[RMDB]
This 207-nucleotide RNA was probed chemically with 2A3. The 2A3 profile rests on 442 reads. Source: RMDB library OK3TST, as collected in RNAgym. Values cover nucleotides 27 to 156.

RNA sequence: GGGAACGACUCGAGUAGAGUCGAAAAGUACGAAUUCAUUGAGGCGGAAUUAGACGCGCUUUAAUGGCACGAAUUGCUAAAACGAACGUCCGGGGAUGGUGCAUACUAUCCCCACACUAACAAGAGAUGGAGCCUAACCAUGAACACCACACAAAUCGAUGGCCUGACUCUUCGGAGUCAGGCCAUCAAAAGAAACAACAACAACAAC
Reactivity to 2A3 in 0.01 (KOAc 150mM, MgCl2 10mM, bicine 150mM(pH8.5), 24C), signal-to-noise 1, nucleotides 027 to 156: g100u040a020c050g060a050a230u050u100c020a010u040u020g000a050g000g020c000g000g020a040a050u150u110a050g050a220c080g000c010g000c010u070u020u040a010a020u050g030g010c020a020c220g080a050a070u110u030g000c000u050a010a080a170a080c020g060a200a000c050g090u150c100c170g020g010g030g000a000u000g020g060u020g100c020a050u260a140c000u000a000u000c000c080c030c000a000c020a000c020u080a110a010c010a000a100g010a000g010a040u030g010g000a000g010c000c010u060a040a110c000c000a020u060g010a020a000c010a020c040c040a030c000a030c000a020a100a020u240c060